[RMDB]
RNA sequence: GGGAACGACUCGAGUAGAGUCGAAAAGUUAUCGAAAACGUCUUAGCUACCACUACAACAACAAUGCUGGACGGUGAUGGUUCGACUUACUCGAAACCAUCACGUAGUGGUAGUCGUUCCCAUUCAACCUGCCUAUAACCUUCGGGUUAUAGGCAGGAAAAGAAACAACAACAACAAC
Reactivity to DMS in 0.01 (KOAc 150mM, MgCl2 10mM, bicine 150mM(pH8.5), 24C), signal-to-noise 1, nucleotides 027 to 126: g050u000u010a100u000c130g010a110a070a100a080c020g010u010c030u000u020a160g030c010u000a030c040c010a040c030u000a010c010a070a050c090a050a050c210a140a050u010g020c050u000g000g000a050c010g010g040u000g020a060u000g000g000u000u000c000g030a060c300u010u010a030c200u010c000g000a000a000a030c030c000a000u000c000a000c070g000u000a000g010u000g000g030u000a040g010u000c010g000u000u010c000c000c000a120u000u010c110a040a120
Reactivity to 2A3 in 0.01 (KOAc 150mM, MgCl2 10mM, bicine 150mM(pH8.5), 24C), signal-to-noise 3, nucleotides 027 to 126: g020u040u030a100u200c100g050a090a060a030a070c020g020u000c030u130u210a020g010c000u010a020c010c040a040c050u100a030c040a120a000c000a040a000c060a120a210u220g080c050u130g070g010a020c020g010g010u020g000a010u020g000g010u010u000c000g020a040c030u120u190a050c010u070c010g030a010a040a060c010c000a010u030c010a010c070g020u040a020g000u010g020g000u000a000g000u000c000g000u000u000c000c000c000a000u040u070c010a010a020